[RMDB]
RNA sequence: GGGAACGACUCGAGUAGAGUCGAAAAAGAUAGAUGAGGUACUUAUAUGGAUAUUUUGCAAAUAGCAUCGUGAAGGCGCUGAGCAUGUCUCUCAAGCCCUUUAAACCUCUAUUGCUCCAACUUUACAAUAGAAAUAAUAAUACCUAAGUGGUAGAAAGACGAUGAUACUGUUCGCAGUAUCAUCGUCAAAAGAAACAACAACAACAAC
Reactivity to 2A3 in 0.01 (KOAc 150mM, MgCl2 10mM, bicine 150mM(pH8.5), 24C), signal-to-noise 1, nucleotides 027 to 156: a010g090a030u140a010g060a010u060g090a060g000g000u130a100c240u250u180a040u110a120u220g010g010a030u010a090u140u050u110u120g010c030a000a010a180u000a030g030c020a050u110c040g030u010g140a010a000g040g000c090g000c060u000g000a010g010c090a190u220g010u060c090u020c000u000c090a100a030g000c000c000c000u000u000u000a070a090a000c000c040u050c010u040a010u000u090g010c000u000c030c010a170a180c020u120u210u230a060c060a020a020u030a200g070a130a040a000u160a030a000u040a010a010u020a080c000c000u050a290a020g060u130g130g000u000a030g020a000a110a000
Source: RMDB library OK3TST, as collected in RNAgym. Structure probing data (2A3) for a 207-nucleotide construct. For 2A3, 448 sequencing reads were counted. Reactivities are given for positions 27 through 156.